Description
This 177-nucleotide RNA was probed chemically with DMS and 2A3. The RNA was probed in 150 mM KOAc, 10 mM MgCl2 and 150 mM bicine (pH 8.5) at 24 C. For DMS the reverse transcriptase was MarathonRT. Source: RMDB library OK2TST, as collected in RNAgym. The DMS profile rests on 2,174 reads.
[RMDB]
RNA sequence: GGGAACGACUCGAGUAGAGUCGAAAAUAUGGUACGACUGUCGAUCGGCUUAAGCUUAAUUCAACACAGAAUUACCACAAGAUCGUCGCCGGAGAUAACAAUUUCAAAGGGAGUUGUACAGGAGGCAACCAAGUCUUGAAUUCGUUCAAGACUUGGUAAAAGAAACAACAACAACAAC
Reactivity to DMS in 0.01 (KOAc 150mM, MgCl2 10mM, bicine 150mM(pH8.5), 24C), signal-to-noise 4, nucleotides 027 to 126: u010a090u010g010g010u000a030c020g020a040c010u000g010u010c010g000a010u010c100g020g020c170u010u000a060a150g030c110u010u010a010a060u000u000c020a040a100c300a110c250a080g000a050a030u000u000a080c230c040a090c160a110a100g000a020u000c000g010u010c080g020c000c000g000g020a300g000a030u010a060a110c120a070a050u040u000u000c020a020a260a150g000g000g000a060g020u000u000g020u000a040c070a090g000g000a060g000g000c170a100
Reactivity to 2A3 in 0.01 (KOAc 150mM, MgCl2 10mM, bicine 150mM(pH8.5), 24C), signal-to-noise 2, nucleotides 027 to 126: u240a120u090g040g000u010a030c020g000a020c040u060g020u070c030g000a040u020c010g000g000c040u160u110a090a020g030c020u030u030a030a030u010u040c020a120a100c090a020c010a300g030a010a040u000u030a030c050c030a040c020a080a030g000a060u030c000g000u020c010g020c050c000g020g000a050g000a020u070a030a090c130a190a270u040u060u070c010a040a010a000g050g010g000a040g000u000u010g000u030a010c000a010g110g080a050g020g080c010a020